[RMDB]
RNA sequence: GGGAACGACUCGAGUAGAGUCGAAAAGAGAAUAGAUGAGUAAGAUUGCAUUGGCUGCCUGUGUGUAUUAGUUUUCUUUUGCUGCAUAUUGAAUUACUGCAAACUCAGUGGCUUAAAAUCACACACAUUUAUUAUGUCACAAUUUCUGUGGUCAGGACACGGAGGAUCAUUUCGAUGAUCCUCCGUGAAAAGAAACAACAACAACAAC
Reactivity to 2A3 in 0.01 (KOAc 150mM, MgCl2 10mM, bicine 150mM(pH8.5), 24C), signal-to-noise 1, nucleotides 027 to 156: g050a000g040a050a070u050a010g080a130u050g030a010g080u060a100a040g070a090u060u240g010c050a060u110u040g030g000c010u030g080c040c050u020g000u010g000u010g000u000a080u010u080a120g010u000u020u060u030c000u060u080u070u080g030c070u030g000c020a000u030a140u150u050g060a130a120u130u030a050c020u040g040c000a010a000a080c070u050c110a010g000u000g030g010c000u090u110a110a060a060a060u050c030a040c000a000c020a000c030a070u080u080u080a080u100u100a040u090g020u030c020a000c000a040a110u060u100u140c030u020g020u000g000g100u110c130a020g000g000a000
An RNA of 207 nucleotides, treated with 2A3 and read out base by base. 2A3 is a SHAPE reagent: it acylates the 2'-hydroxyl of flexible nucleotides of all four kinds.